Structure probing data (2A3 and DMS) for a 177-nucleotide construct. The data come from the RNA Mapping Database (RMDB), library M2PK50. For DMS the reverse transcriptase was MarathonRT.
RNA sequence: GGGAACGACUCGAGUAGAGUCGAAAACCAAGGUAGUUCGCUACCUUGGAAAGAAAGCUCGAGCGAAGGGAAGGGAAAGGAGGCUCGAGCAACCCACCCAAAAAAGAGCAUGCUUCGGCAUGCUCAAGAACUUUAUGGAGUUCGCUCCAUAAAGUUCAAAAGAAACAACAACAACAAC
Reactivity to 2A3 in 0.01 (KOAc 150mM, MgCl2 10mM, bicine 150mM(pH8.5), 24C), signal-to-noise 3, nucleotides 027 to 126: c000c000a000a000g010g000u010a010g020u030u070c180g010c090u000a000c000c010u000u010g000g030a010a010a010g040a020a090a010g010c000u000c010g010a010g020c060g050a150a060g090g030g050a090a120g070g010g040a140a160a090g100g060a100g030g020c010u000c010g000a000g000c010a000a010c010c000c000a020c000c020c010a070a170a050a040a020a000g000a000g000c000a000u000g000c020u050u060c120g030g000c000a010u000g000c000u040c000a000a000
Reactivity to DMS in 0.01 (KOAc 150mM, MgCl2 10mM, bicine 150mM(pH8.5), 24C), signal-to-noise 2, nucleotides 027 to 126: c000c000a000a010g020g010u010a000g000u000u020c200g000c000u000a010c010c000u000u000g000g000a060a060a110g020a190a120a170g000c000u000c000g020a010g030c000g000a150a110g010g000g000a110a080g000g000g010a090a070a090g020g010a120g010g010c010u000c000g000a020g020c010a030a040c030c020c020a240c090c030c050a000a040a070a080a070a110g010a000g010c000a000u000g010c000u000u030c240g050g010c000a010u000g010c010u000c000a010a040